The record gives the reactivity of an RNA of 177 nucleotides to 2A3 and DMS. For DMS the reverse transcriptase was MarathonRT. 2A3 adducts were read by reverse transcription with SuperScript II with manganese.

RNA sequence: GGGAACGACUCGAGUAGAGUCGAAAAGAUAUGGAUUCCGUAAUCCAAUGAACUACGCGGUCGGAAACGACCGGCGCAUUGGUCUAACGGAAUCCUAAGUCAAAAGGUGCUCGUUCGCGAGCACCAACGAUCUCAUAGAGUUCGCUCUAUGAGAUCGAAAAGAAACAACAACAACAAC
Reactivity to 2A3 in 0.01 (KOAc 150mM, MgCl2 10mM, bicine 150mM(pH8.5), 24C), signal-to-noise 3, nucleotides 027 to 126: g030a000u100a020u190g020g000a000u000u000c000c000g000u030a030a050u050c000c010a010a000u030g010a100a090c120u120a040c300g010c010g050g020u010c000g000g040a120a070a050c020g010a010c010c010g010g040c000g000c000a000u000u020g050g000u030c110u110a170a050c000g000g000a010a000u000c000c000u000a030a010g030u020c030a020a000a060a250g000g010u000g010c000u010c020g050u080u090c300g010c020g140a000g020c000a000c010c000a000a000
Reactivity to DMS in 0.01 (KOAc 150mM, MgCl2 10mM, bicine 150mM(pH8.5), 24C), signal-to-noise 3, nucleotides 027 to 126: g010a040u010a300u010g000g000a010u000u000c000c000g010u000a170a210u000c010c000a010a010u000g010a100a070c180u010a270c070g010c000g000g010u000c000g010g000a130a100a180c010g010a020c000c010g010g000c030g000c020a010u000u000g000g000u020c160u000a140a020c010g000g000a010a000u000c010c000u000a010a070g000u000c000a080a060a110a100g000g020u000g010c010u010c000g020u000u000c210g040c010g000a020g000c000a000c000c010a020a060